[RMDB]
RNA sequence: GGGAACGACUCGAGUAGAGUCGAAAACAGAGUCGGCUUCGACUUUAGUGUAGUUACUGUUUCGUCGGCUUAACCGCCGAUCCACUACAUGCAAGGGGCAGCCGGGCUGUGAGGCAGCUGCCAGGAUAUUAAUUAAGUCCUUCGGGACUUAAUUAAUAAAAGAAACAACAACAACAAC
Reactivity to 2A3 in 0.01 (KOAc 150mM, MgCl2 10mM, bicine 150mM(pH8.5), 24C), signal-to-noise 2, nucleotides 027 to 126: c020a010g050a010g160u020c000g050g080c160u300u230c090g060a050c000u060u050u060a040g000u000g000u000a000g000u010u150a070c070u080g010u060u070u080c030g000u010c000g000g000c030u020u010a020a030c010c000g010c010c000g020a000u000c020c040a020c010u010a010c010a000u030g040c050a120a090g070g000g020g070c010a000g010c010c020g230g180g030c010u000g050u040g060a060g000g020c000a030g000c010u040g010c000c000a010g060g030a020u030
Reactivity to DMS in 0.01 (KOAc 150mM, MgCl2 10mM, bicine 150mM(pH8.5), 24C), signal-to-noise 4, nucleotides 027 to 126: c060a100g000a050g010u000c010g010g010c220u000u010c020g010a050c000u000u010u010a150g020u000g000u000a020g010u000u010a090c160u010g000u000u000u010c080g010u000c010g000g010c000u000u010a130a130c290c230g010c000c000g000a010u000c050c060a060c010u000a010c010a010u000g000c270a100a090g010g010g010g010c060a020g010c000c070g010g000g010c010u000g000u010g000a120g000g010c010a130g000c050u000g010c010c010a090g000g000a150u000